[RMDB]
RNA sequence: GGGAACGACUCGAGUAGAGUCGAAAAAGGGGCCUAGUCGUAGAAAACCUAAUAAAAGCUCCAAGGACGAAUGGAUCCGUCGGGAAACUGAACGUAAUCGAGAACUGGAAAAUGAACGGGACUGGCACAGCCGAUACUGAUUCGUCAGUAUCGGCUGAAAAGAAACAACAACAACAAC
Reactivity to DMS in 0.01 (KOAc 150mM, MgCl2 10mM, bicine 150mM(pH8.5), 24C), signal-to-noise 1, nucleotides 027 to 126: a040g000g010g010g010c050c010u010a140g030u000c060g040u010a120g000a110a050a190a130c040c020u010a050a070u050a080a030a060a100g030c000u000c000c000a060a080g030g000a090c040g000a070a080u030g000g000a090u000c170c030g020u030c060g010g000g000a080a090a120c030u000g000a060a110c090g000u020a020a060u000c080g010a070g020a080a090c050u010g020g010a050a000a060a060u020g000a060a070c140g010g010g000a110c170u020g000g010c040a200